[RMDB]
RNA sequence: GGGAACGACUCGAGUAGAGUCGAAAACAGAGCUGAUGGGCCAUGUACCUAUCCAAAAUGAGAUCACAUCUUGCACACUGUGCUAAUUUGAGAUUCUCAUGCCUCCUACUUGGAGAGAUCUGGACUACUAACUGUAUGACGUUCGCGUCAUACAGAACCUUAAGGAGCGGUUCGCCGCUCCUUAAGGAAAAGAAACAACAACAACAAC
Reactivity to DMS in 0.01 (KOAc 150mM, MgCl2 10mM, bicine 150mM(pH8.5), 24C), signal-to-noise 2, nucleotides 027 to 156: c030a050g010a080g080c000u000g010a060u000g030g010g060c010c050a130u010g010u010a040c010c020u000a040u000c030c090a040a100a120a070u000g020a000g010a070u000c020a090c050a050u000c100u000u010g000c030a070c030a130c130u000g010u010g040c030u010a020a050u000u000u010g010a120g010a060u000u010c000u000c000a020u000g000c040c010u010c020c020u000a080c220u000u000g020g000a040g020a100g020a030u000c010u010g000g020a190c130u010a120c240u000a070a200c000u000g020u000a000u000g020a010c020g010u000u010c300g030c010g010u000c000a020u000a000c030a010g000a030a110
Reactivity to 2A3 in 0.01 (KOAc 150mM, MgCl2 10mM, bicine 150mM(pH8.5), 24C), signal-to-noise 6, nucleotides 027 to 156: c010a010g020a010g060c080u130g020a030u040g020g010g020c090c050a140u180g090u180a110c000c010u030a030u030c030c040a030a110a050a090u010g000a010g000a010u020c010a000c000a040u010c020u010u030g010c000a020c020a070c200u290g020u010g020c040u130a050a050u020u010u020g070a070g000a010u250u060c010u010c010a000u030g020c000c000u030c000c010u100a250c110u180u270g010g000a020g000a000g000a030u000c020u040g000g050a030c050u050a030c030u050a290a080c000u000g000u000a000u000g010a010c010g010u060u020c150g000c000g120u000c000a000u000a000c000a010g000a000a010

Chemical mapping of a 207-nucleotide RNA with DMS and 2A3. 2A3 adducts were read by reverse transcription with SuperScript II with manganese. The reactions ran in a buffer of 150 mM KOAc, 10 mM MgCl2 and 150 mM bicine (pH 8.5), at 24 C. DMS adducts were read by reverse transcription with MarathonRT. The DMS profile rests on 3,051 reads. It was measured as part of the RMDB library M2RFPK. Values cover nucleotides 27 to 156.